[RMDB]
RNA sequence: GGGAACGACUCGAGUAGAGUCGAAAAUCUGUUUACAAGUUAUCGGUAAGUCCAUGUCUGACUCCGAUUCCGUAAACAGAAGCCAGUUUGCGUCAAGUCCGACAUGGACUCUUGGCAGAACUGAUCAGCAUCACUGGACUUUCGAGUCCAGUGAUGCAAAAGAAACAACAACAACAAC
Reactivity to DMS in 0.01 (KOAc 150mM, MgCl2 10mM, bicine 150mM(pH8.5), 24C), signal-to-noise 1, nucleotides 027 to 126: u000c010u000g010u000u000u000a050c010a120a190g030u000u000a020u000c010g000g000u000a070a040g000u010c030c050a110u000g000u010c100u030g040a030c000u010c030c000g000a020u000u000c180c070g020u000a000a020a000c000a040g000a070a140g040c150c000a040g010u000u010u000g000c050g070u000c020a080a010g000u000c010c060g000a140c240a090u020g000g000a010c030u000c040u020u030g000g040c000a280g000a020a020c040u000g000a090u000c180a170
Reactivity to 2A3 in 0.01 (KOAc 150mM, MgCl2 10mM, bicine 150mM(pH8.5), 24C), signal-to-noise 1, nucleotides 027 to 126: u000c000u000g000u030u010u000a010c000a090a210g020u040u030a070u070c040g070g040u130a080a000g000u000c050c020a140u110g070u000c090u120g020a000c010u010c040c000g020a020u010u000c010c070g000u020a010a010a010c010a010g060a030a000g140c020c010a020g030u010u000u070g050c030g020u000c010a020a000g000u020c020c030g110a240c300a290u210g000g000a000c030u020c020u040u010g020g000c030a010g000a020a040c020u040g030a110u090c050a030